Chemical mapping of a 207-nucleotide RNA with 2A3 and DMS. The reactions ran in a buffer of 150 mM KOAc, 10 mM MgCl2 and 150 mM bicine (pH 8.5), at 24 C. For 2A3, 1,798 sequencing reads were counted.
[RMDB]
RNA sequence: GGGAACGACUCGAGUAGAGUCGAAAAACUCCUAUUCCAACACGUCCUCGUCGUACAGAGUGGUAACAUGUGUCACCCCAUAUCCAAGCUUGGGUACACGGGCUUGACCCAACCCCUUGGGCGGAUGAAAACCAGAUUACGUUCGCGUAAUCUGGAACGGUGCAUAUGAGUUCGCUCAUAUGCACCGAAAAGAAACAACAACAACAAC
Reactivity to 2A3 in 0.01 (KOAc 150mM, MgCl2 10mM, bicine 150mM(pH8.5), 24C), signal-to-noise 3, nucleotides 027 to 156: a000c060u060c070c010u070a100u080u090c050c040a050a030c060a000c040g050u060c010c030u030c020g120u040c060g000u110a100c060a050g040a060g040u080g030g060u100a110a060c040a120u090g030u000g060u120c040a120c000c010c000c010a030u010a020u120c020c010a000a000g050c040u010u000g010g000g020u010a000c030a010c030g000g010g000c080u290u300g180a300c000c000c000a000a010c000c000c000c000u000u010g000g000g000c000g000g000a030u050g060a060a070a000a020c000c000a010g000a000u000u010a010c010g010u020u060c150g000c010g140u000a000a010u030c000u000g000g000a010a010
Reactivity to DMS in 0.01 (KOAc 150mM, MgCl2 10mM, bicine 150mM(pH8.5), 24C), signal-to-noise 1, nucleotides 027 to 156: a100c000u020c030c020u000a100u000u000c020c020a120a050c090a000c090g000u000c010c010u000c060g010u000c040g030u030a120c070a080g000a180g120u010g030g010u000a020a130c110a060u000g000u000g040u000c010a060c020c000c010c000a220u000a130u000c020c000a020a300g080c130u000u000g030g010g010u000a050c160a040c100g030g000g000c010u000u000g010a120c010c000c000a070a100c110c020c000c030u000u000g010g000g010c300g010g020a060u000g030a000a000a180a140c030c000a060g000a010u000u000a000c030g060u000u030c300g030c060g020u000a000a050u000c010u050g000g000a020a030